[RMDB]
RNA sequence: GGGAACGACUCGAGUAGAGUCGAAAAUAUGAGAGGUAGUGAUUAUAAUGAUCGACUGGAAUUUCAGCUGAGUUAGGAGGACAUCUGAGGUUGAGGAUCAGCAGAUGGGCAUUCCCAGGGGAUUGUUGGAGUCAGAAUACCACAUGGUAUGAGUUGAGCGAGUAUUUACUUUCGAGUAAAUACUCGCAAAAGAAACAACAACAACAAC
Reactivity to 2A3 in 0.01 (KOAc 150mM, MgCl2 10mM, bicine 150mM(pH8.5), 24C), signal-to-noise 1, nucleotides 027 to 156: u280a090u130g020a060g000a000g090g050u020a040g090u040g050a060u030u140a120u190a210a110u210g040a030u030c040g130a070c100u050g070g060a030a070u100u040u130c030a020g010c030u100g020a040g120u030u050a050g020g010a020g000g000a020c010a040u050c090u020g010a010g060g000u030u040g020a010g000g000a010u000c050a000g010c000a000g010a060u030g010g010g000c040a040u060u010c000c000c000a010g000g010g000g020a040u030u030g020u000u000g030g010a040g010u000c130a040g040a110a000u040a030c090c020a050c110a280u210g040g000u020a010u050g040a090g070u030u050g060a040
This 207-nucleotide RNA was probed chemically with 2A3. Conditions: 150 mM KOAc, 10 mM MgCl2 and 150 mM bicine (pH 8.5), 24 C. For 2A3, 443 sequencing reads were counted.